[RMDB]
RNA sequence: GGGAACGACUCGAGUAGAGUCGAAAAGACUGGCGAAACGCAUGGUAGGUCACGCGGAAAUGCGGGGCGUGUUGGCGCGAUGGCGAUAGCCUUUGCCGAGGGUUCAAUGGUGACCGGGCGCCCGCCGAAACCGCUCAAAUUUCGAUUUGAGCGGUUUAAAAGAAACAACAACAACAAC
Reactivity to DMS in 0.01 (KOAc 150mM, MgCl2 10mM, bicine 150mM(pH8.5), 24C), signal-to-noise 1, nucleotides 027 to 126: g020a090c090u020g000g020c020g030a090a120a070c070g000c030a070u000g020g010u000a100g000g000u000c040a070c050g000c060g000g000a070a070a060u000g030c010g020g010g030g020c010g020u000g010u000u000g000g010c030g030c090g000a070u010g000g020c040g020a130u010a110g010c030c020u000u000u010g040c030c040g000a120g020g010g000u010u000c070a110a100u010g010g000u000g010a070c010c020g000g000g000c000g000c020c000c000g030c030c070g010
An RNA of 177 nucleotides, treated with DMS and read out base by base. The RNA was probed in 150 mM KOAc, 10 mM MgCl2 and 150 mM bicine (pH 8.5) at 24 C. For DMS, 1,961 sequencing reads were counted.